RNA sequence: GGGAACGACUCGAGUAGAGUCGAAAACAUUAGCCGUUCGCGGCUAAUGCCGACUGUCUUGUUUGAUGGUAGAGUGGAAGGACAGGUAGACCAUUUUAGAAAUCGCCCAUUCAUUCGUGAAUGGGAAUGGAGCUACUAUUUUCGAAUAGUAGCUCCAAAAAGAAACAACAACAACAAC
Reactivity to DMS in 0.01 (KOAc 150mM, MgCl2 10mM, bicine 150mM(pH8.5), 24C), signal-to-noise 3, nucleotides 027 to 126: c000a010u000u010a010g000c010c000g030u010u030c190g030c010g000g010c000u000a000a000u000g010c050c050g000a110c040u000g000u000c040u020u010g010u010u000u000g010a100u010g000g010u000a040g010a080g010u000g010g020a160a050g010g010a060c060a030g000g020u000a060g000a210c040c030a110u010u010u020u020a110g000a060a110a080u010c180g020c000c000c000a020u000u010c000a030u000u010c170g020u000g010a020a000u000g000g010g010a030a020
Reactivity to 2A3 in 0.01 (KOAc 150mM, MgCl2 10mM, bicine 150mM(pH8.5), 24C), signal-to-noise 1, nucleotides 027 to 126: c000a020u000u000a020g000c000c010g040u040u060c200g000c020g130g030c000u000a020a000u000g000c000c020g030a030c040u060g020u040c010u030u140g120u280u120u110g120a060u110g080g090u050a030g030a040g090u080g040g100a050a000g040g000a010c010a030g050g010u010a000g020a020c000c010a050u000u010u050u160a060g050a010a120a050u120c060g000c010c000c000a010u000u010c000a000u000u100c280g080u030g000a000a000u000g000g000g000a000a000
Record summary:
The data come from the RNA Mapping Database (RMDB), library M2PK50. Chemical mapping of a 177-nucleotide RNA with DMS and 2A3. The RNA was probed in 150 mM KOAc, 10 mM MgCl2 and 150 mM bicine (pH 8.5) at 24 C. High 2A3 reactivity points to a flexible backbone, as in loops and unpaired stretches. Reactivities are given for positions 27 through 126.